[RMDB]
Chemical mapping of a 207-nucleotide RNA with DMS and 2A3. For DMS the reverse transcriptase was MarathonRT. Values cover nucleotides 27 to 156. Reactivities are rounded to 0.1 and cut off at 0 and 3. The DMS profile rests on 2,866 reads. It was measured as part of the RMDB library OK3TST.
RNA sequence: GGGAACGACUCGAGUAGAGUCGAAAAGCUUUCAGAUUCACAUUCCUCAUCUACAAAGUGGCGAUUUUAUAGUUACUUCUUGGCAUUAUCAGAGAUGAUGAUGAUGGUGAUGAUAAGAACAGUAACAAGAGCGGUGAUAAUAAUAGUUACAAUGAUAUAAAUAUCAGUGCUUCGGCACUGAUAUUUAAAAAGAAACAACAACAACAAC
Reactivity to DMS in 0.01 (KOAc 150mM, MgCl2 10mM, bicine 150mM(pH8.5), 24C), signal-to-noise 2, nucleotides 027 to 156: g010c080u000u000u000c060a140g010a130u000u010c030a060c040a130u010u000c010c000u000c080a160u000c010u000a160c070a030a120a070g030u000g020g020c020g000a120u000u010u020u010a130u020a120g050u000u000a020c010u000u010c000u020u010g030g040c050a060u000u000a050u030c090a040g000a290g020a080u000g010a110u000g030a050u010g020a090u020g030g040u000g020a030u000g000a080u000a070a080g000a060a070c060a110g000u000a040a070c010a050a080g030a070g020c010g010g000u000g000a040u000a040a050u000a050a090u000a140g010u000u000a070c020a040a070u000g000a150u000a180
Reactivity to 2A3 in 0.01 (KOAc 150mM, MgCl2 10mM, bicine 150mM(pH8.5), 24C), signal-to-noise 2, nucleotides 027 to 156: g040c030u050u140u080c050a020g050a210u140u100c070a050c000a120u000u070c000c010u050c040a080u000c060u090a090c030a100a070a010g020u000g040g020c020g020a010u000u070u100u200a090u070a090g000u010u000a020c010u010u030c010u030u030g040g000c020a050u010u050a070u180c050a040g010a040g030a140u060g010a030u030g000a010u010g010a010u020g010g080u020g010a080u020g000a030u000a040a020g030a070a000c030a050g040u040a020a020c020a090a020g000a000g010c040g000g040u030g010a030u030a060a030u100a010a030u070a040g040u010u030a030c040a030a060u100g050a040u190a000